[RMDB]
RNA sequence: GGGAACGACUCGAGUAGAGUCGAAAAGAUAUGGAGUAUGACGCUGCAUAGACUAUAGCCAACUAUAGGUCGGAAACGACCUAUAGUUGGCUACGAAUCUAUGACCCAGCGGAGUACUCCUAAGUCACACAAGAAUUGAGUUCGCUCAAUUCUUGUGAAAAGAAACAACAACAACAAC
Reactivity to DMS in 0.01 (KOAc 150mM, MgCl2 10mM, bicine 150mM(pH8.5), 24C), signal-to-noise 2, nucleotides 027 to 126: g010a110u000a300u010g010g020a020g040u000a030u010g000a300c010g010c010u010g020c010a000u000a000g010a020c100u000a300u010a010g010c000c000a000a020c000u000a010u000a000g010g050u000c000g050g020a110a090a240c020g030a010c000c000u020a000u000a000g000u000u000g000g010c000u000a000c070g000a030a110u000c000u000a010u010g000a130c270c300c080a010g000c000g000g000a300g000u000a000c010u010c000c000u000a010a100g020u020c030a300